[RMDB]
RNA sequence: GGGAACGACUCGAGUAGAGUCGAAAAGAUGAAGAGGAAUGGGAAGCCGAAAUCUAAACUGAAACAGAGGCGUCACCCAAUUAUCAAUUGGUAAGUGAUAUCUAUGUUUCGAUCUGUAUCUCGGCCUGUGAUGACAUUACUUCGGUAAUGUCAUCACAAAAGAAACAACAACAACAAC
Reactivity to DMS in 0.01 (KOAc 150mM, MgCl2 10mM, bicine 150mM(pH8.5), 24C), signal-to-noise 1, nucleotides 027 to 126: g020a080u000g010a040a060g000a090g010g020a050a060u020g000g000g030a140a130g010c000c000g010a010a000a030u000c010u020a070a100a080c160u010g000a010a020a000c000a000g010a010g020g000c090g010u000c000a010c000c000c000a030a010u000u000a090u010c300a080a070u010u000g000g010u000a030a080g030u000g010a000u000a000u020c010u000a070u000g000u010u000u000c000g000a030u000c100u010g010u000a020u000c030u000c000g010g000c020c160u000
Reactivity to 2A3 in 0.01 (KOAc 150mM, MgCl2 10mM, bicine 150mM(pH8.5), 24C), signal-to-noise 2, nucleotides 027 to 126: g090a070u130g020a010a030g070a010g020g100a100a090u110g030g010g100a020a050g000c010c000g020a020a000a000u050c040u080a050a040a030c060u060g010a000a000a000c010a010g010a010g060g010c040g020u000c000a000c000c000c010a000a010u090u060a220u180c080a020a020u000u010g040g000u080a130a020g010u020g000a010u010a010u040c010u020a030u000g000u000u000u000c020g000a040u010c050u050g050u120a030u010c020u010c000g050g000c000c030u030